RNA sequence: GGGAACGACUCGAGUAGAGUCGAAAAGAUCGGAAACAGCAGUAGGUGAGUCCGCCUUAUGUGAAGGAUCGGCUGAAACACGAGGAAAUACUGAGCCAACGCAAGACGGUAGCCGAACAGUAGCAACAAAACGCUUACGUGUUCGCACGUAAGCGAAGCAUUAUCCAAGGUUCGCCUUGGAUAAUGCAAAAGAAACAACAACAACAAC
Reactivity to 2A3 in 0.01 (KOAc 150mM, MgCl2 10mM, bicine 150mM(pH8.5), 24C), signal-to-noise 5, nucleotides 027 to 156: g030a030u080c040g020g060a040a050a060c020a020g080c010a010g020u090a030g020g040u030g030a050g050u030c040c040g050c020c010u140u070a130u160g120u040g070a070a030g060g020a060u070c030g010g000c020u040g040a070a090a030c100a010c070g030a070g060g060a020a160a020u120a060c060u050g020a020g030c010c010a010a020c040g040c040a070a000g020a030c030g020g010u030a010g020c010c020g030a020a000c040a020g110u110a020g030c040a010a040c040a090a090a020a010c030g000c000u000u000a000c010g000u020g030u050u100c190g010c080a000c000g000u000a000a020g010c000g000a010a010
Reactivity to DMS in 0.01 (KOAc 150mM, MgCl2 10mM, bicine 150mM(pH8.5), 24C), signal-to-noise 2, nucleotides 027 to 156: g020a110u010c020g000g000a130a030a110c050a140g020c050a110g000u010a140g010g040u000g000a110g020u010c040c060g050c010c010u000u000a120u010g020u000g010a080a150g020g010a100u000c050g040g040c080u010g000a080a080a100c070a090c070g000a190g010g010a120a060a090u000a080c040u040g030a140g010c020c010a030a140c050g010c050a060a100g000a110c020g030g040u000a090g000c020c010g000a030a090c020a080g010u010a100g000c060a040a150c110a020a050a100a090c020g000c000u030u000a030c000g010u000g020u000u010c300g020c040a010c000g020u000a010a020g030c030g020a010a010